Chemical mapping of a 207-nucleotide RNA with DMS and 2A3. DMS adducts were read by reverse transcription with MarathonRT. The data come from the RNA Mapping Database (RMDB), library RNAMAK. The DMS profile rests on 2,265 reads.

RNA sequence: GGGAACGACUCGAGUAGAGUCGAAAAGGGGUCCAUCAAGGAGCCUACAGGCUCUUGGAUUUAUGGAGCUGAAGCCUCCACGGCUCCAUUGUCAGAGCCUGGUCAGGCUCCGAAGUGGACGGAGGCACCCAAACUUCAUCUCUUCGGAGAUGAAGAAGGUAAAGAUUAACUUCGGUUAAUCUUUACCAAAAGAAACAACAACAACAAC
Reactivity to DMS in 0.01 (KOAc 150mM, MgCl2 10mM, bicine 150mM(pH8.5), 24C), signal-to-noise 1, nucleotides 027 to 156: g000g040g010g010u000c010c000a040u000c050a040a300g000g000a020g060c000c000u000a050c090a100g030g020c000u000c010u000u000g000g000a050u000u010u010a040u000g000g000a020g010c020u020g010a080a150g000c040c010u000c000c000a300c020g010g030c000u010c000c000a000u000u000g010u000c060a120g000a020g000c010c010u000g010g010u000c170a050g090g000c000u010c010c010g000a010a050g030u000g030g020a030c000g060g080a000g060g040c060a070c020c010c000a090a180a200c010u010u000c000a010u010c010u010c000u010u000c300g070g020a020g040a020u010g000a000a020g000a130a140
Reactivity to 2A3 in 0.01 (KOAc 150mM, MgCl2 10mM, bicine 150mM(pH8.5), 24C), signal-to-noise 1, nucleotides 027 to 156: g150g000g010g010u000c000c000a000u100c020a040a050g010g000a000g000c010c010u050a060c020a010g000g000c010u020c040u090u210g060g000a040u230u300u090a010u030g000g000a000g020c010u010g020a090a040g010c000c000u000c010c000a000c000g030g000c010u020c000c000a030u000u000g010u020c070a040g000a000g000c000c000u010g000g040u210c170a010g000g000c140u000c000c000g010a000a000g000u000g000g000a010c020g000g000a030g000g010c030a050c040c000c000a060a050a090c000u000u000c000a000u020c000u000c010u020u130c300g130g000a000g000a000u000g000a000a000g000a020a020